[RMDB]
RNA sequence: GGGAACGACUCGAGUAGAGUCGAAAAGCCACCGUGCCCGGAACGGCUCGCGACGGCGGUGCUGCCGCGCUCCGCCACUCCGGUGUUACUACCAGACGUCGUGGCGGCUGCGCCCGGCAUGACAGCCUAAUGCACAACGGUUCGCCGUUGUGCAUUAAAAAGAAACAACAACAACAAC
Reactivity to 2A3 in 0.01 (KOAc 150mM, MgCl2 10mM, bicine 150mM(pH8.5), 24C), signal-to-noise 4, nucleotides 027 to 126: g030c010c010a020c010c020g020u050g020c030c030c030g040g050a130a070c060g020g000c040u030c020g070c040g060a140c050g020g000c010g020g000u030g000c020u040g020c030c020g000c010g000c000u010c010c010g000c010c000a010c020u030c030c030g010g010u010g030u040u120a080c050u050a030c000c040a090g040a150c070g080u130c020g000u040g000g010c000g000g000c110u040g000c000g010c030c020c000g010g000c020a020u050g060a050c040a040g010c010c000
Reactivity to DMS in 0.01 (KOAc 150mM, MgCl2 10mM, bicine 150mM(pH8.5), 24C), signal-to-noise 7, nucleotides 027 to 126: g010c020c020a120c100c030g010u000g020c060c020c030g020g010a100a150c160g020g010c030u010c070g010c080g000a090c160g000g000c000g010g010u000g000c020u000g020c100c100g010c010g000c040u000c020c000g000c010c000a040c020u000c040c020g000g010u020g000u010u000a120c220u020a030c030c020a080g010a120c300g010u010c150g000u000g000g000c000g000g010c120u000g010c040g010c010c100c010g000g000c000a020u010g000a120c050a110g000c010c020